[RMDB]
RNA sequence: GGGAACGACUCGAGUAGAGUCGAAAACGACGUGCUCGCGCUGUCCAACGGCGCGCGCUCGGGGCUCACGGGCUUCGUCGCGGGGCUCGCGCGCAAGGUGGCCGAGCACAACGUGACGAUCAACAAACAGGCGUAAUCGGUUCGCCGAUUACGCCUGAAAAGAAACAACAACAACAAC
Reactivity to DMS in 0.01 (KOAc 150mM, MgCl2 10mM, bicine 150mM(pH8.5), 24C), signal-to-noise 1, nucleotides 027 to 126: c000g010a070c300g000u000g000c010u000c000g030c230g010c110u000g000u030c010c020a110a180c300g000g000c030g020c020g000c020g000c150u000c020g000g000g000g000c000u000c000a070c120g000g000g000c000u030u000c010g060u010c020g000c080g000g000g000g030c110u000c010g020c000g000c010g050c000a050a210g010g040u000g000g030c000c040g000a000g050c000a050c100a090a110c020g000u000g000a120c150g000a140u000c180a070a030c160a020a200a170
An RNA of 177 nucleotides, treated with DMS and read out base by base.
The DMS profile rests on 541 reads.
It was measured as part of the RMDB library OK2TRN.
The RNA was probed in 150 mM KOAc, 10 mM MgCl2 and 150 mM bicine (pH 8.5) at 24 C.
Values cover nucleotides 27 to 126.